Structure probing data (2A3 and DMS) for a 177-nucleotide construct. Source: RMDB library OK2TRN, as collected in RNAgym. The reactions ran in a buffer of 150 mM KOAc, 10 mM MgCl2 and 150 mM bicine (pH 8.5), at 24 C. Reactivities are given for positions 27 through 126. DMS (dimethyl sulfate) methylates the pairing face of unpaired adenines and cytosines.
[RMDB]
RNA sequence: GGGAACGACUCGAGUAGAGUCGAAAACGAUCGAUCGCGCGAUUAGCAUAUAUCGUAAUCGGCUAGCCGGCGCAUUAAUGCAUUAGCUAUAAUAUUAAUCGGCGCGCAUUAUAUAUAAUAUCGUACGCAUCGCACUAGGUUUCGACCUAGUGCGAUGAAAAGAAACAACAACAACAAC
Reactivity to 2A3 in 0.01 (KOAc 150mM, MgCl2 10mM, bicine 150mM(pH8.5), 24C), signal-to-noise 1, nucleotides 027 to 126: c040g000a040u130c040g020a000u060c020g010c010g010c000g070a040u050u020a010g000c030a040u090a010u030a000u180c040g010u030a000a220u100c000g070g000c010u040a010g060c000c070g190g050c080g010c070a010u120u160a150a080u180g050c040a010u080u080a050g060c030u100a050u050a240a080u040a020u160u150a080a080u070c010g140g000c010g000c000g040c050a010u040u010a020u000a010u000a000u030a140a140u070a020u130c010g000u000a030c090g010
Reactivity to DMS in 0.01 (KOAc 150mM, MgCl2 10mM, bicine 150mM(pH8.5), 24C), signal-to-noise 2, nucleotides 027 to 126: c060g000a110u010c140g000a040u000c030g000c000g040c000g000a020u000u000a050g000c230a130u030a080u000a010u000c060g000u010a080a120u010c110g000g020c040u010a030g010c090c060g010g030c060g000c120a030u020u020a060a080u010g020c030a160u010u010a080g000c040u000a060u000a040a080u000a090u000u010a010a030u000c020g040g010c000g030c110g000c140a050u000u010a070u000a120u010a060u000a070a100u010a060u010c010g010u000a180c110g010